[RMDB]
The record gives the reactivity of an RNA of 177 nucleotides to 2A3 and DMS. Reactivities are rounded to 0.1 and cut off at 0 and 3. DMS adducts were read by reverse transcription with MarathonRT. The reactions ran in a buffer of 150 mM KOAc, 10 mM MgCl2 and 150 mM bicine (pH 8.5), at 24 C.
RNA sequence: GGGAACGACUCGAGUAGAGUCGAAAACGACCGCAGGGCGACCUGCGCGAUGCCCACACCACACACUCCGCCCCGCGCCUGGUGAACCGACCCGGGUGGCUAGCAACUAUCAGUUCAAUACACAAAGUACCACUCAUUUCUUCGGAAAUGAGUGGUAAAAAGAAACAACAACAACAAC
Reactivity to 2A3 in 0.01 (KOAc 150mM, MgCl2 10mM, bicine 150mM(pH8.5), 24C), signal-to-noise 3, nucleotides 027 to 126: c050g030a050c040c030g000c010a000g050g000g040c050g050a060c010c010u010g000c000g000c010g020a020u090g070c000c020c000a020c000a010c020c000a010c030a010c000a020c050u010c010c000g000c000c010c010c000g040c000g000c000c010u010g000g000u040g100a090a040c030c020g070a070c010c000c030g030g000g000u050g050g020c010u020a010g020c020a030a040c030u070a080u180c050a010g010u100u080c050a050a060u090a120c070a020c020a090a140a010g080
Reactivity to DMS in 0.01 (KOAc 150mM, MgCl2 10mM, bicine 150mM(pH8.5), 24C), signal-to-noise 2, nucleotides 027 to 126: c150g000a210c300c000g000c000a000g050g010g010c220g010a160c000c000u000g010c020g030c080g050a090u020g010c030c000c000a090c070a090c040c000a100c070a110c100a050c040u010c020c030g060c050c020c070c010g020c170g020c000c030u030g000g010u030g000a120a090c080c020g000a080c080c000c000g000g040g020u010g000g000c000u020a040g030c060a060a050c080u010a120u020c060a040g000u010u030c010a120a100u010a030c060a120c090a090a050a140g010